Description: An RNA of 207 nucleotides, treated with 2A3 and read out base by base.

[RMDB]
RNA sequence: GGGAACGACUCGAGUAGAGUCGAAAAGUCUAGUUCGCUAGACGACCGAACCUUUGUGUAUGGCCCACGUGCAAGAGUUGGGGUGCCCAUUGGGCACACCAACUUGAUGACCACGUGGAAGCCAUACACUCUGGUGACUUAGACUAUUCGUAGUCAAAAAGUCAGUCGUAUUCGUACGACUGACUUUAAAAGAAACAACAACAACAAC
Reactivity to 2A3 in 0.01 (KOAc 150mM, MgCl2 10mM, bicine 150mM(pH8.5), 24C), signal-to-noise 2, nucleotides 027 to 156: g000u000c020u000a020g020u030u130c300g050c070u000a000g020a030c010g020a000c000c020g060a050a050c000c020u000u020u030g000u000g010u000a000u010g000g000c000c000c000a000c010g010u010g010c040a300a270g000a030g020u010u000g020g040g010g000u010g010c000c020c060a300u190u300g000g020g000c000a000c010a000c000c000a000a000c000u010u000g010a020u010g020a010c010c110a000c000g010u000g000g010a140a030g000c010c000a000u010a010c000a010c000u000c000u000g000g000u010g000a010c060u080u260a010g030a010c000u000a030u080u070c250g140u050a030g000u010c000a080a130
Source: RMDB library RNAMAK, as collected in RNAgym.